[RMDB]
RNA sequence: GGGAACGACUCGAGUAGAGUCGAAAAGAGCUGAAGUACAGCAAGAACGACGUCAUCCUUGGCACAGCGUCGAAGAUAAGCGUGCCGAAUGCCAAGGAUUAACGGCACGCGAGGCGAAGACGCCAGACGUGCGUAUGAGGUUCGCCUCAUACGCACGAAAAGAAACAACAACAACAAC
Reactivity to 2A3 in 0.01 (KOAc 150mM, MgCl2 10mM, bicine 150mM(pH8.5), 24C), signal-to-noise 3, nucleotides 027 to 126: g080a000g000c000u010g020a200a010g140u200a160c000a000g030c010a000a030g070a060a030c030g040a000c000g050u060c040a040u010c010c020u010u000g000g000c030a020c050a100g060c050g060u040c000g020a050a000g040a090u180a100a000g010c000g000u000g000c000c000g040a090a050u110g040c010c020a050a000g000g000a000u020u040a040a010c000g000g020c000a000c000g000c000g010a030g000g000c020g030a110a080g050a130c020g000c000c000a050g000a090
Reactivity to DMS in 0.01 (KOAc 150mM, MgCl2 10mM, bicine 150mM(pH8.5), 24C), signal-to-noise 2, nucleotides 027 to 126: g050a040g020c020u000g000a070a060g010u000a210c050a010g000c040a140a200g020a090a280c140g030a040c080g020u030c060a060u030c040c010u020u000g000g000c040a200c290a260g000c040g010u090c140g010a230a210g020a030u000a170a150g010c000g000u000g000c000c000g030a150a130u010g010c010c070a070a120g000g010a000u030u010a000a140c000g000g000c000a000c000g000c050g000a100g000g010c030g000a190a280g050a030c030g000c000c110a140g000a080